[RMDB]
RNA sequence: GGGAACGACUCGAGUAGAGUCGAAAAUUUCUUUGGGCUCCAUUGGUCAAAAGUUCAGUUUGCAUCAAAAGGAGUGCUCUGCAAACCUUAUACCUAAUAAAAAUCCUUUAUCAAGAAAGAAUGGAUCCAAGAAGUUAUGGUUCGCCAUAACUUCUUGAAAAGAAACAACAACAACAAC
Reactivity to 2A3 in 0.01 (KOAc 150mM, MgCl2 10mM, bicine 150mM(pH8.5), 24C), signal-to-noise 2, nucleotides 027 to 126: u010u010u010c000u070u060u010g010g020g060c000u000c040c020a030u010u060g020g000u010c030a080a050a020a120g090u130u110c070a090g080u000u090u010g000c050a070u090c000a120a050a070a130g100g040a080g050u040g030c000u020c010u040g000c050a040a050a060c010c020u130u100a110u110a080c000c030u110a150a080u140a170a280a020a020a020u080c000c000u060u110u090a190u160c110a090a040g100a170a150a000g030a010a090u050g020g000a010u010c050
Reactivity to DMS in 0.01 (KOAc 150mM, MgCl2 10mM, bicine 150mM(pH8.5), 24C), signal-to-noise 2, nucleotides 027 to 126: u000u000u010c000u010u010u010g020g000g040c040u000c030c020a120u000u010g020g000u030c030a050a050a060a060g010u020u000c200a100g010u000u000u000g010c070a020u000c030a050a040a140a180g030g000a080g040u000g000c030u000c050u000g020c080a030a080a090c040c050u000u000a070u000a130c020c010u010a080a070u020a040a040a070a100a090u000c010c010u000u000u000a100u010c060a050a060g010a110a040a110g000a040a040u010g000g010a020u000c200